An RNA of 177 nucleotides, treated with DMS and 2A3 and read out base by base. DMS adducts were read by reverse transcription with MarathonRT. The RNA was probed in 150 mM KOAc, 10 mM MgCl2 and 150 mM bicine (pH 8.5) at 24 C. For 2A3 the reverse transcriptase was SuperScript II with manganese.

RNA sequence: GGGAACGACUCGAGUAGAGUCGAAAAGAUAUGGAAUUGAUUGCAUCGAUCUCACUGUGUCGGAAACGACAUUGAGGGAGCAACUCAAUUCCUAAGUCAAAGUGCAAUGUCUUCGGACAUUGCACAACAUAGUGUACAACUUCGGUUGUACACUAUGAAAAGAAACAACAACAACAAC
Reactivity to DMS in 0.01 (KOAc 150mM, MgCl2 10mM, bicine 150mM(pH8.5), 24C), signal-to-noise 9, nucleotides 027 to 126: g000a010u000a100u000g000g000a020a020u000u000g010a030u000u000g010c000a300u010c240g000a060u000c010u000c000a040c300u010g020u000g010u000c000g010g010a030a020a050c000g020a010c000a020u000u010g000a020g000g000g000a030g020c000a010a010c300u000c000a010a010u000u000c000c000u000a000a070g000u000c010a120a110a180g010u000g000c000a010a010u000g010u000c000u000u020c250g030g010a010c000a000u000u000g000c000a000c000a030a110
Reactivity to 2A3 in 0.01 (KOAc 150mM, MgCl2 10mM, bicine 150mM(pH8.5), 24C), signal-to-noise 9, nucleotides 027 to 126: g010a000u030a020u090g010g000a000a010u010u010g020a010u010u010g010c050a130u300c290g110a140u030c030u020c010a040c100u140g030u030g000u140c010g020g000a030a020a020c000g010a010c010a030u030u050g010a030g000g050g030a140g000c010a000a020c110u010c010a000a010u000u010c000c000u000a040a000g020u000c060a160a110a080g010u000g000c000a000a010u010g000u000c010u080u200c300g110g000a000c000a000u000u010g000c000a000c000a000a000